This 177-nucleotide RNA was probed chemically with 2A3 and DMS.
Values cover nucleotides 27 to 126.
The reactions ran in a buffer of 150 mM KOAc, 10 mM MgCl2 and 150 mM bicine (pH 8.5), at 24 C.
For DMS the reverse transcriptase was MarathonRT.
The DMS profile rests on 1,183 reads.
For 2A3 the reverse transcriptase was SuperScript II with manganese.
[RMDB]
RNA sequence: GGGAACGACUCGAGUAGAGUCGAAAAGAUAUGGACGUAUGGGAGCGAUAAGCUCGUGUCGGAAACGACAUAGAGCUUUUGACGCUUAGUACGUCCUAAGUCAAACGAGGACCUUCGGGUCCUCGAACGUUUUACACCACUUCGGUGGUGUAAAACGAAAAGAAACAACAACAACAAC
Reactivity to 2A3 in 0.01 (KOAc 150mM, MgCl2 10mM, bicine 150mM(pH8.5), 24C), signal-to-noise 1, nucleotides 027 to 126: g010a010u090a020u040g000g010a000c030g020u000a020u060g300g300g060a010g020c100g060a160u050a300a010g020c000u000c010g030u000g040u030c020g060g020a010a040a010c030g010a000c000a000u030a120g010a020g040c000u000u010u050u160g200a050c080g000c010u000u060a000g010u000a000c000g000u050c000c000u000a030a000g010u000c020a040a020a090c020g000a000g000g000a010c030c000u070u140c300g210g020g000u020c000c050u000c000g000a000a000
Reactivity to DMS in 0.01 (KOAc 150mM, MgCl2 10mM, bicine 150mM(pH8.5), 24C), signal-to-noise 1, nucleotides 027 to 126: g000a030u000a300u000g000g020a010c000g020u000a010u000g010g050g000a000g040c000g020a100u020a010a000g020c010u000c010g000u010g020u000c010g010g010a120a080a170c000g010a000c000a020u000a030g030a010g030c010u000u000u020u020g010a130c070g000c000u030u000a300g020u010a010c000g000u000c000c000u020a000a120g000u010c000a080a160a230c040g010a020g000g010a010c010c000u000u010c240g030g020g000u000c000c040u000c000g000a010a080